[RMDB]
RNA sequence: GGGAACGACUCGAGUAGAGUCGAAAAACGAGUCGUACGCGACUCGAAUGGUAUUGUCGGCGUAAAAGAACAAGACGUCACCGGACGCGACCGGGCUAAAAAGCGAAACGUCAUCUACGGAUGACAAAAAACGGACCUGGGUUCGCCCAGGUCCGAACAUGAAUGAGACCUUCGGGUCUCAUUCAUGAAAAGAAACAACAACAACAAC
Reactivity to 2A3 in 0.01 (KOAc 150mM, MgCl2 10mM, bicine 150mM(pH8.5), 24C), signal-to-noise 1, nucleotides 027 to 156: a000c010g000a000g010u000c010g020u040a020c180g000c000g100a000c010u040c000g010a020a070u050g000g090u140a150u120u250g070u110c060g000g070c030g010u050a070a100a070a070g090a110a090c110a140a000g050a020c000g000u000c000a000c000c000g010g000a040c010g010c000g010a000c000c000g000g000g000c040u050a010a000a010a010a010g000c040g000a110a050a010c060g000u000c010a000u000c000u000a010c170g080g020a020u020g020a000c040a020a060a060a060a000a000c000g000g000a000c000c000u000g010g020g040u030u050c130g020c030c010c000a000g000g000u000c000c000g000a000a000
An RNA of 207 nucleotides, treated with 2A3 and read out base by base. The data come from the RNA Mapping Database (RMDB), library M2RFPK.